[RMDB]
RNA sequence: GGGAACGACUCGAGUAGAGUCGAAAACGCGCUGGCCGUCAGGAGCGAUGAUCUGGGCCACCCUCCCGUGCAGAACGGCCAGAACGGGCACUCCCAUGCGCAGUACAUUGUGGGAUCUGUACCUGGCCCAAGGCAACUGAUUCGUCAGUUGCCUUGGAAAAGAAACAACAACAACAAC
Reactivity to 2A3 in 0.01 (KOAc 150mM, MgCl2 10mM, bicine 150mM(pH8.5), 24C), signal-to-noise 2, nucleotides 027 to 126: c020g020c020g000c000u020g000g020c000c020g080u030c020a070g000g120a040g070c110g060a080u140g040a060u090c050u080g070g000g000c000c000a010c020c000c000u010c020c010c000g030u090g000c050a060g040a280a030c020g010g000c000c010a000g010a030a020c030g050g000g000c010a080c050u010c000c000c010a030u050g030c070g000c020a040g030u120a070c030a150u140u120g020u080g050g020g000a040u030c020u000g020u020a060c030c010u020g040g020c000
Reactivity to DMS in 0.01 (KOAc 150mM, MgCl2 10mM, bicine 150mM(pH8.5), 24C), signal-to-noise 4, nucleotides 027 to 126: c060g040c300g000c020u010g000g020c000c010g010u000c060a070g020g030a040g000c090g020a050u010g000a110u000c050u010g000g000g020c030c010a100c030c020c020u000c010c000c030g020u010g020c170a130g000a120a060c070g000g030c000c000a030g000a030a020c030g000g000g000c120a070c170u000c000c000c010a070u000g000c080g030c070a070g010u010a300c140a130u010u000g020u000g000g000g010a060u000c090u000g020u000a040c110c040u010g000g020c110